[RMDB]
RNA sequence: GGGAACGACUCGAGUAGAGUCGAAAAACUCCUCUACGGAGGAGAAAGCUCAGUGAUUGUAGCCAAUUACAUUGGCAAUAUACGCUAUGCUGACCUCAGUUUGAUGAACAUUUUUACUGAGAGCUAAUAACCUCAGUUUCUUCGGAAACUGAGGUUAAAAAGAAACAACAACAACAAC
Reactivity to 2A3 in 0.01 (KOAc 150mM, MgCl2 10mM, bicine 150mM(pH8.5), 24C), signal-to-noise 2, nucleotides 027 to 126: a000c000u000c040c040u000c030u000a040c300g060g000a000g000g030a020g080a040a040a000g000c010u010c030a000g040u000g200a300u010u160g020u150a000g020c000c000a010a000u070u070a060c080a100u020u020g000g000c030a050a000u180a000u000a030c000g000c030u030a100u120g000c000u000g060a110c000c000u020c000a010g000u020u070u140g050a060u110g070a150a040c120a260u060u260u150u070u000a040c000u000g000a000g000a010g040c000u040a060a070
Reactivity to DMS in 0.01 (KOAc 150mM, MgCl2 10mM, bicine 150mM(pH8.5), 24C), signal-to-noise 2, nucleotides 027 to 126: a130c000u000c000c000u010c000u000a210c150g060g000a000g000g000a000g000a020a080a100g030c030u010c150a010g000u000g000a110u000u010g000u000a160g000c000c000a000a000u000u050a080c070a300u000u000g000g020c000a110a040u070a080u020a100c020g030c050u000a110u000g000c060u000g020a220c100c000u000c010a030g000u000u010u020g000a080u010g000a030a080c200a040u000u010u000u000u000a020c000u000g020a010g010a100g020c070u010a040a180